[RMDB]
RNA sequence: GGGAACGACUCGAGUAGAGUCGAAAAACAGAAGGGUGAACGUUCAAGCAAGCUAGCCGGCAAAAAAGCAAACUUGACCACCAAGGAUAAAAGAGAUCUUAUCCAAGGAUGCAAAAGAUAAUCUCACAAAAGCUUCAUUCGUUCGCGAAUGAAGCAACUAAUUCAGUGUGUUCGCACACUGAAUUAGAAAAGAAACAACAACAACAAC
Reactivity to 2A3 in 0.01 (KOAc 150mM, MgCl2 10mM, bicine 150mM(pH8.5), 24C), signal-to-noise 6, nucleotides 027 to 156: a000c050a030g080a110a050g060g000g000u040g040a100a020c030g030u080u050c030a030a020g000c020a080a020g000c030u050a010g030c010c040g050g010c080a030a080a060a060a010a000g030c030a060a040a030c010u030u040g020a040c000c020a010c010c010a030a030g030g000a010u040a060a070a030a020g090a010g000a020u020c020u030u020a000u010c010c010a020a020g050g010a030u090g040c040a030a060a050a010g030a020u120a110a060u080c030u010c070a060c060a060a130a030a040g000c000u000u000c000a000u000u000c000g030u030u080c270g010c010g090a000a010u000g000a000a000g000c000a000a000
Reactivity to DMS in 0.01 (KOAc 150mM, MgCl2 10mM, bicine 150mM(pH8.5), 24C), signal-to-noise 2, nucleotides 027 to 156: a130c020a090g010a100a110g020g040g040u000g000a140a080c040g020u000u000c050a080a180g020c030a050a180g020c030u010a230g000c090c030g000g000c040a010a010a100a080a090a080g010c010a050a050a040c030u000u000g010a150c110c010a100c020c020a080a300g020g010a080u000a030a010a030a070g010a190g000a090u000c060u000u000a040u000c010c010a030a240g000g020a080u000g000c070a060a030a060a040g000a070u000a060a120u010c000u000c030a090c140a000a060a080a120g000c000u000u000c000a030u000u000c020g030u000u000c300g020c010g010a010a000u000g010a030a000g020c000a000a030

An RNA of 207 nucleotides, treated with 2A3 and DMS and read out base by base. For DMS, 3,724 sequencing reads were counted. 2A3 adducts were read by reverse transcription with SuperScript II with manganese. The 2A3 profile rests on 8,454 reads. The reactions ran in a buffer of 150 mM KOAc, 10 mM MgCl2 and 150 mM bicine (pH 8.5), at 24 C.